[RMDB]
RNA sequence: GGGAACGACUCGAGUAGAGUCGAAAAGUCACUCAGUCAGUGAGUCUGAGUCUGUCACACUGUGACAGUCAGACAGUGUCAGUGUGACUCUGAGUCACUCUGUCUCAGUCUGAGACUCUGUCUGUGAGUCUGGGCUAAAAUUCGUUUUAGCCCAGACAAAAGAAACAACAACAACAAC
Reactivity to 2A3 in 0.01 (KOAc 150mM, MgCl2 10mM, bicine 150mM(pH8.5), 24C), signal-to-noise 4, nucleotides 027 to 126: g010u000c010a010c010u010c000a000g040u010c010a070g090u030g300a060g030u050c010u000g040a040g010u030c000u020g000u000c000a020c020a050c190u250g000u010g030a000c010a000g010u000c010a000g000a010c000a010g030u020g020u050c000a000g000u000g010u010g040a000c000u000c160u190g120a080g000u000c010a010c020u000c010u010g000u000c000u000c050a020g010u000c000u020g020a010g000a020c000u020c030u050g170u040c020u040g170u060g110a050
Reactivity to DMS in 0.01 (KOAc 150mM, MgCl2 10mM, bicine 150mM(pH8.5), 24C), signal-to-noise 4, nucleotides 027 to 126: g000u010c020a060c010u000c020a010g010u010c040a210g020u010g000a140g010u000c010u000g010a040g010u000c010u000g000u000c010a010c000a180c260u010g030u000g000a010c000a010g010u000c000a000g010a010c010a060g010u010g010u010c010a010g020u000g010u010g000a020c000u010c170u010g000a100g020u000c010a030c010u000c020u000g010u010c010u000c020a080g030u000c040u010g000a050g000a010c010u000c060u000g000u000c030u000g000u010g010a240